RNA sequence: GGGAACGACUCGAGUAGAGUCGAAAAGAUAUGGAGGAUGUAAGGCUCAUCGAUCUAUGGAGAUAGCUGUAUAUCGGAAACGAUAUACCGAAACCAUAGGGAGAGCCUUCAUCCUCCUAAGUCAAAACGCUUUAUCAAGUUCGCUUGAUAAAGCGAAACGGUAGAAUUUCUUCGGAAAUUCUACCGUAAAAGAAACAACAACAACAAC
Reactivity to 2A3 in 0.01 (KOAc 150mM, MgCl2 10mM, bicine 150mM(pH8.5), 24C), signal-to-noise 1, nucleotides 027 to 156: g000a000u020a020u020g000g000a000g000g010a000u030g130u300a000a050g010g000c000u000c020a100u300c050g000a000u000c010u000a000u000g020g000a250g090a260u180a050g030c010u010g000u000a000u000a000u000c000g000g050a000a000a000c000g000a000u000a000u000a000c020c010g020a070a020a030c000c000a000u000a000g020g000g000a020g000a000g000c000c010u000u000c010a000u000c000c000u000c000c000u000a000a010g020u020c020a000a030a000a060c000g010c000u000u010u000a000u020c000a000a000g010u070u130c120g080c240u010u010g000a010u010a010a010a020g000c000g020a000a030
Conditions: 150 mM KOAc, 10 mM MgCl2 and 150 mM bicine (pH 8.5), 24 C. This 207-nucleotide RNA was probed chemically with 2A3. Values cover nucleotides 27 to 156. The 2A3 profile rests on 1,169 reads.